[RMDB]
RNA sequence: GGGAACGACUCGAGUAGAGUCGAAAACAGCCAGCCCUGCCCAUCUUGGGGGGCUCCAGGCUCCUGGCCUGGCUCUGACCUGCUCUUAAUUAACCUCUCCUUCACCUGACUAACUCCUGCCUCCCCGCUUCAUUCUAAGCUUCGGCUUAGAAUGAAGAAAAGAAACAACAACAACAAC
Reactivity to 2A3 in 0.01 (KOAc 150mM, MgCl2 10mM, bicine 150mM(pH8.5), 24C), signal-to-noise 5, nucleotides 027 to 126: c020a000g070c020c010a000g010c000c000c020u130g060c020c020c020a110u180c130u240u210g000g000g010g000g000g000c000u000c000c000a010g000g000c010u040c020c100u070g020g000c000c000u010g030g000c010u000c010u040g090a100c000c000u020g040c010u040c010u060u170a160a150u100u100a110a070c010c000u030c010u040c010c000u030u050c020a040c040c020u020g050a050c010u060a080a000c020u010c010c010u010g010c000c000u030c000c010c000c020g000
Reactivity to DMS in 0.01 (KOAc 150mM, MgCl2 10mM, bicine 150mM(pH8.5), 24C), signal-to-noise 2, nucleotides 027 to 126: c090a070g050c010c050a060g020c020c000c040u000g000c000c010c040a130u030c200u050u000g020g020g010g000g000g000c040u020c050c090a010g020g000c070u010c100c210u010g020g000c000c010u010g000g030c110u000c030u030g000a080c030c030u010g010c010u000c040u000u040a070a110u020u060a080a150c030c050u010c000u000c040c030u030u000c010a160c060c030u000g000a060c090u000a120a120c050u010c020c000u000g000c030c030u000c000c000c010c130g030